[RMDB]
RNA sequence: GGGAACGACUCGAGUAGAGUCGAAAAGGAGGAAGGAUGUCCAAGCGGAGACGCCCUGAGGAAUCGCUCAUUAGAGUGUGCCUAACAGAUUGUGUUAGGGUUUACAGGUACCGUAGACCACUCUUCAGAAACCUCAGGGGACAGUGACGGUACCAUACGUAGUAGAGUAAUUCGUUACUCUACUACGAAAAGAAACAACAACAACAAC
Reactivity to 2A3 in 0.01 (KOAc 150mM, MgCl2 10mM, bicine 150mM(pH8.5), 24C), signal-to-noise 3, nucleotides 027 to 156: g030g020a000g000g010a050a010g030g010a030u010g020u000c010c000a050a010g040c020g020g010a040g020a010c020g010c000c010c000u000g000a000g010g020a020a040u010c010g020c030u140c050a070u060u040a000g000a000g000u010g000u110g050c000c000u000a000a000c010a020g230a300u100u180g090u030g010u050u000a010g000g010g000u030u040u050a010c020a010g000g000u000a010c000c000g010u000a010g020a020c010c010a000c010u000c000u040u080c040a010g010a020a020a000c000c000u010c000a000g000g000g000g010a010c010a030g030u040g030a010c020g000g000u010a020c000c000a000u020a060
Reactivity to DMS in 0.01 (KOAc 150mM, MgCl2 10mM, bicine 150mM(pH8.5), 24C), signal-to-noise 4, nucleotides 027 to 156: g010g010a060g010g010a100a040g020g000a070u010g020u010c020c030a060a140g020c040g000g010a180g020a110c060g000c010c000c000u000g000a020g000g000a020a250u000c030g030c230u010c060a100u010u000a050g010a040g020u000g020u000g020c010c000u000a000a030c020a110g010a220u000u000g030u010g020u000u000a030g000g020g020u000u000u000a070c080a070g010g030u000a010c010c010g020u000a060g010a130c020c000a040c010u000c010u000u000c070a100g000a040a050a280c010c000u000c010a030g000g020g000g010a030c030a060g010u000g010a050c010g000g020u000a020c000c000a060u000a070